[RMDB]
RNA sequence: GGGAACGACUCGAGUAGAGUCGAAAAGAUAUGGACGAUUCUAUGAAGUCGAUCAUUUCGGAAACGAAAUGAGUCGAUGGAGAAUGGUCCUAAGUCAAAUCUACAUGGUGUUCGCACCAUGUAGAAACAAUGGAUCUACCUUCGGGUAGAUCCAUUGAAAAGAAACAACAACAACAAC
Reactivity to DMS in 0.01 (KOAc 150mM, MgCl2 10mM, bicine 150mM(pH8.5), 24C), signal-to-noise 3, nucleotides 027 to 126: g000a020u010a300u000g000g000a040c000g010a020u000u010c000u000a250u010g010a140a200g000u000c000g000a050u000c000a000u000u000u010c000g000g010a120a070a210c010g010a000a010a010u000g000a030g000u000c010g000a030u000g000g000a020g000a010a010u000g010g000u000c000c000u000a010a050g000u010c020a060a090a160u000c000u000a010c000a000u010g000g010u000g010u000u000c240g020c020a000c000c000a000u000g010u000a000g000a010a080a150
Reactivity to 2A3 in 0.01 (KOAc 150mM, MgCl2 10mM, bicine 150mM(pH8.5), 24C), signal-to-noise 2, nucleotides 027 to 126: g010a030u050a040u160g010g000a010c080g040a070u020u000c030u030a300u220g070a050a020g070u020c010g000a010u010c000a010u000u000u000c000g000g000a100a040a030c010g000a000a010a010u040g020a040g300u020c020g020a030u070g030g000a010g000a010a010u020g080g020u000c000c000u010a090a020g010u020c020a050a000a190u050c010u000a000c000a010u010g030g000u050g040u050u110c260g020c140a000c030c000a000u000g000u010a010g020a000a000a000

Background:
The record gives the reactivity of an RNA of 177 nucleotides to DMS and 2A3. DMS adducts were read by reverse transcription with MarathonRT. Conditions: 150 mM KOAc, 10 mM MgCl2 and 150 mM bicine (pH 8.5), 24 C. It was measured as part of the RMDB library TTRDEL. For 2A3 the reverse transcriptase was SuperScript II with manganese.